Chemical mapping of a 207-nucleotide RNA with 2A3 and DMS. DMS adducts were read by reverse transcription with MarathonRT.
RNA sequence: GGGAACGACUCGAGUAGAGUCGAAAAGUCUGUGCGUUUCCAUUUGAGUAUCCUGAAAACGGGCUUUUCAGAAUGGAACGUACAUAUUAAAUAGUAGGAGUGCAUAGUGGCCCGUAUAGCAGGCAUUGAGGCGAGGAUUGUUUCGACAAUCCUCGAAGUUUAAGGCAAGAUUCGUCUUGCCUUAAACAAAAGAAACAACAACAACAAC
Reactivity to 2A3 in 0.01 (KOAc 150mM, MgCl2 10mM, bicine 150mM(pH8.5), 24C), signal-to-noise 3, nucleotides 027 to 156: g080u020c030u040g010u000g000c000g000u030u170u060c000c000a020u040u010u020g060a050g010u080a080u110c000c000u030g080a040a040a040a100c120g010g000g040c020u110u070u080u090c060a070g170a000a000u010g000g000a000a000c000g000u000a000c000a000u010a000u000u120a030a080a070u190a010g080u040a030g030g030a040g010u040g030c050a030u050a060g070u070g080g000c000c000c010g020u040a050u040a090g010c050a020g060g000c020a010u050u140g080a060g080g070c020g000a000g000g000a000u000u000g020u020u050u060c050g050a000c000a000a000u000c000c000u000c010g000a010a000
Reactivity to DMS in 0.01 (KOAc 150mM, MgCl2 10mM, bicine 150mM(pH8.5), 24C), signal-to-noise 1, nucleotides 027 to 156: g040u000c090u000g010u010g020c020g020u000u000u000c000c000a070u010u010u000g030a150g020u000a050u000c020c000u000g010a030a030a120a230c060g020g030g030c110u010u000u000u000c040a120g030a000a020u010g010g010a030a020c040g010u000a000c010a020u010a030u000u010a050a110a110u000a130g010u010a090g000g010a040g030u000g020c030a070u020a070g010u000g010g000c000c010c010g000u000a090u000a070g010c040a100g020g030c090a120u000u000g000a060g030g030c000g000a050g000g000a030u020u000g010u000u000u010c250g030a100c030a010a000u000c020c000u000c000g000a010a050
Record summary:
The RNA was probed in 150 mM KOAc, 10 mM MgCl2 and 150 mM bicine (pH 8.5) at 24 C.